[RMDB]
RNA sequence: GGGAACGACUCGAGUAGAGUCGAAAAUUGUACCACCACCUCCUCAGGGUUUAGAAGAUACAUAUAGAUAUAUAACUUCUAUGGCUACUCGCUGCCCUUCUCAACAACCUGCAAAAGAGAAGGUAGAGCCAUUUAAUACGUUCGCGUAUUAAAUGGCAAAAGAAACAACAACAACAAC
Reactivity to DMS in 0.01 (KOAc 150mM, MgCl2 10mM, bicine 150mM(pH8.5), 24C), signal-to-noise 1, nucleotides 027 to 126: u010u010g000u020a090c000c040a130c090c020a120c070c030u000c030c040u000c030a040g040g000g020u030u000u000a100g020a000a010g000a100u020a040c010a100u000a170u000a130g000a110u010a100u020a030u000a060a110c010u000u000c010u010a020u000g000g030c070u000a060c100u000c110g000c090u000g070c100c000c030u000u000c000u000c000a090a110c130a000a110c040c020u010g000c090a020a030a090a250g000a010g030a050a020g000g030u000a070g030a300
Reactivity to 2A3 in 0.01 (KOAc 150mM, MgCl2 10mM, bicine 150mM(pH8.5), 24C), signal-to-noise 1, nucleotides 027 to 126: u050u020g100u090a040c000c030a070c020c010a010c050c020u030c000c020u050c040a020g030g000g000u030u020u030a030g010a020a000g040a050u090a140c010a000u260a010u090a190g040a060u080a050u030a040u000a300a080c000u000u000c000u000a070u070g030g000c040u070a040c030u090c110g010c040u050g000c000c000c000u030u010c030u010c030a060a140c020a100a120c000c000u060g080c100a040a020a070a070g060a010g000a000a030g000g020u040a040g010a000